Overview:
Conditions: 150 mM KOAc, 10 mM MgCl2 and 150 mM bicine (pH 8.5), 24 C. Structure probing data (DMS) for a 177-nucleotide construct. For DMS the reverse transcriptase was MarathonRT. It was measured as part of the RMDB library TTRINS.
[RMDB]
RNA sequence: GGGAACGACUCGAGUAGAGUCGAAAAGAUAUGGAAAUAUCAGCGUUACCUUGAAGGAUACUAAUAGCAUCUUCGGAAACGAAGAUGCUAUUAGUAUCUGGAGUAACAGCUGAGUAUUUCCUAAGUCCCUUAAACAUAUGUUCGCAUAUGUUUAAGGAAAAGAAACAACAACAACAAC
Reactivity to DMS in 0.01 (KOAc 150mM, MgCl2 10mM, bicine 150mM(pH8.5), 24C), signal-to-noise 9, nucleotides 027 to 126: g000a130u000a300u010g010g000a010a010a000u010a020u000c000a010g020c010g010u000u000a000c010c300u010u010g010a240a170g000g000a010u000a000c000u010a000a000u000a000g000c010a010u000c000u000u000c000g010g000a120a080a230c000g010a020a000g000a010u000g000c000u000a000u000u000a000g010u000a000u000c000u000g010g000a040g020u000a000a010c010a130g040c000u000g000a020g020u000a010u000u000u000c000c000u000a080a160g000u000c030